Conditions: 150 mM KOAc, 10 mM MgCl2 and 150 mM bicine (pH 8.5), 24 C.
The record gives the reactivity of an RNA of 177 nucleotides to 2A3 and DMS.
2A3 adducts were read by reverse transcription with SuperScript II with manganese.
The data come from the RNA Mapping Database (RMDB), library OK2TST.
For DMS, 9,281 sequencing reads were counted.
RNA sequence: GGGAACGACUCGAGUAGAGUCGAAAAGUGGAAGAUUGUGACAUCAGCGUAGAUGCGAUCGGCGACCUGUCCACCGUAGCCUUCAGUGUUGUGUUCUACAUCGUGGACUUUGAAGGCGAUGGCGGUGCAUGUGUGCACGGUUCGCCGUGCACACAUGAAAAGAAACAACAACAACAAC
Reactivity to 2A3 in 0.01 (KOAc 150mM, MgCl2 10mM, bicine 150mM(pH8.5), 24C), signal-to-noise 4, nucleotides 027 to 126: g080u070g070g030a080a030g000a090u090u060g060u110g090a080c010a060u040c020a020g110c040g160u140a060g020a130u070g020c010g030a030u040c010g020g010c020g020a040c010c020u040g070u050c000c000a000c000c010g020u030a020g000c000c020u010u000c020a020g030u020g070u240u150g080u060g050u100u000c050u050a100c020a250u120c200g090u100g030g000a010c030u060u060u010g000a000a000g000g030c030g020a040u080g050g000c010g000g000u020g000
Reactivity to DMS in 0.01 (KOAc 150mM, MgCl2 10mM, bicine 150mM(pH8.5), 24C), signal-to-noise 5, nucleotides 027 to 126: g030u010g010g010a110a080g010a070u010u000g000u010g020a120c080a030u000c060a110g020c120g010u010a100g010a090u000g010c060g010a060u000c030g010g000c030g010a060c050c030u000g000u000c030c010a020c000c020g010u000a250g000c010c000u000u010c010a050g010u010g010u010u010g000u000g010u000u000c060u010a080c070a090u000c180g020u010g020g000a030c040u000u000u000g000a020a020g000g010c000g010a090u010g000g020c020g010g030u010g000